[RMDB]
RNA sequence: GGGAACGACUCGAGUAGAGUCGAAAAAUACAUUCCUGUGCCGGCAAUACAGUGUGUAAGGAGGUCUCAAUGGCUCGGAAGUGCCAGCAAACCGGCGUAGAUAUUAGCAGACGUAUGGGCGUAAGACAAAAGAGAAUGAUGUUCGCAUCAUUCUCAACUAUCUGACACGGUUCGCCGUGUCAGAUAGAAAAGAAACAACAACAACAAC
Reactivity to DMS in 0.01 (KOAc 150mM, MgCl2 10mM, bicine 150mM(pH8.5), 24C), signal-to-noise 1, nucleotides 027 to 156: a050u000a040c060a120u010u020c080c000u040g000u010g090c020c000g000g070c030a080a130u000a040c040a100g040u000g010u020g010u000a080a090g010g040a090g040g040u010c040u000c060a060a120u000g050g040c000u000c030g040g040a110a170g000u000g010c010c000a150g030c020a030a110a060c000c040g040g040c010g040u000a060g030a190u000a060u000u010a120g100c060a020g000a070c030g040u010a050u000g000g010g040c050g060u000a060a060g010a120c050a040a040a070a040g000a010g010a020a040u000g020a040u000g010u050u000c300g110c010a010u000c000a020u010u020c000u000c010a000a080
Reactivity to 2A3 in 0.01 (KOAc 150mM, MgCl2 10mM, bicine 150mM(pH8.5), 24C), signal-to-noise 2, nucleotides 027 to 156: a000u060a000c050a050u000u040c000c020u020g030u070g020c050c090g050g000c010a060a060u100a080c060a130g040u040g020u010g050u210a050a050g010g050a100g030g000u000c030u020c090a100a110u050g030g000c010u000c050g000g050a090a030g020u010g040c000c010a020g050c050a030a090a000c000c020g000g060c000g020u030a010g030a040u080a080u210u030a070g040c020a040g020a070c020g070u120a090u110g040g000g000c010g040u050a060a010g040a070c090a110a100a020a030g020a000g000a000a000u000g000a000u010g000u030u040c200g000c030a000u000c000a000u000u000c000u000c000a010a000
The record gives the reactivity of an RNA of 207 nucleotides to DMS and 2A3.
The DMS profile rests on 1,605 reads.
Values are in units of 0.01, from 0 to 300, in steps of 10.
Source: RMDB library M2RFPK, as collected in RNAgym.
The reactions ran in a buffer of 150 mM KOAc, 10 mM MgCl2 and 150 mM bicine (pH 8.5), at 24 C.
Reactivities are given for positions 27 through 156.